[RMDB]
RNA sequence: GGGAACGACUCGAGUAGAGUCGAAAACGUGAUGUAUGACUCCACCAAGACGUGGAAGGAGACCGUAGAGCCGGGGACCGUGAUUGGAAUUCAACAAUCAGUCCAUGCCUCACGCUCUGGUACGUCAUGAACGUAGGCAUUUCGAUGCCUACGUUCAAAAAGAAACAACAACAACAAC
Reactivity to 2A3 in 0.01 (KOAc 150mM, MgCl2 10mM, bicine 150mM(pH8.5), 24C), signal-to-noise 4, nucleotides 027 to 126: c040g030u020g020a050u030g040u010a030u060g090a110c080u000c000c000a010c000c030a150a100g110a120c070g000u010g010g010a010a120g030g000a020g020a040c160c050g000u050a120g000a000g030c010c000g090g000g030g000a000c000c100g180u090g000a000u010u000g000g140a130a270u260u140c050a110a110c000a000a060u010c000a000g020u010c000c010a020u070g020c000c010u000c000a000c010g010c050u010c000u020g060g010u040a020c030g010u010c010a030
Reactivity to DMS in 0.01 (KOAc 150mM, MgCl2 10mM, bicine 150mM(pH8.5), 24C), signal-to-noise 2, nucleotides 027 to 126: c080g030u000g030a040u000g020u010a010u000g000a150c060u000c000c010a040c000c080a060a060g030a170c210g010u040g000g000a010a110g000g000a030g020a190c150c000g000u000a090g010a090g040c130c060g000g000g000g020a020c040c270g000u080g000a000u000u000g010g000a130a070u060u030c200a100a150c040a000a000u020c000a210g000u000c000c040a020u000g000c300c020u000c000a060c000g000c050u020c040u020g020g030u000a070c020g000u000c000a060
Conditions: 150 mM KOAc, 10 mM MgCl2 and 150 mM bicine (pH 8.5), 24 C. Chemical mapping of a 177-nucleotide RNA with 2A3 and DMS.